[RMDB]
An RNA of 177 nucleotides, treated with 2A3 and DMS and read out base by base. Source: RMDB library OK1LIB, as collected in RNAgym. For DMS, 960 sequencing reads were counted. The RNA was probed in 150 mM KOAc, 10 mM MgCl2 and 150 mM bicine (pH 8.5) at 24 C. For 2A3 the reverse transcriptase was SuperScript II with manganese.
RNA sequence: GGGAACGACUCGAGUAGAGUCGAAAAGAACGUCAAAUUGACUUAGAUGGUCAUACAUUAUCUGGCGGAGAAAUUCAGCGUUUAGCGAUUACGAGGAUGUUAUUAAAAGAUACUGCAUCAACAUGGAUCGGCUCAUCAUAUUCGUAUGAUGAGCCGAAAAAGAAACAACAACAACAAC
Reactivity to 2A3 in 0.01 (KOAc 150mM, MgCl2 10mM, bicine 150mM(pH8.5), 24C), signal-to-noise 2, nucleotides 027 to 126: g020a080a040c010g020u080c060a020a110a040u160u000g000a000c000u000u030a000g020a150u070g230g000u030c000a000u020a090c100a100u100u140a100u140c070u010g050g000c040g040g000a050g110a050a090a080u110u040c000a070g000c040g090u110u070u240a000g000c000g030a000u100u100a040c050g000a050g100g020a030u080g050u060u060a070u140u070a070a000a000a120g070a200u080a060c030u030g040c000a090u000c000a060a000c120a080u120g120g050a040
Reactivity to DMS in 0.01 (KOAc 150mM, MgCl2 10mM, bicine 150mM(pH8.5), 24C), signal-to-noise 1, nucleotides 027 to 126: g000a070a020c140g000u000c100a010a110a060u060u000g000a020c000u000u060a070g000a070u030g000g000u000c070a050u000a040c260a100u020u000a070u170c040u040g020g060c040g000g000a180g020a030a040a210u000u040c130a070g000c300g010u000u000u000a080g000c080g020a140u170u050a000c060g000a000g000g000a040u040g000u020u000a110u000u150a050a090a070a070g000a000u020a050c250u110g000c070a000u000c120a060a010c270a020u000g020g000a240

Reactivities are given for positions 27 through 126.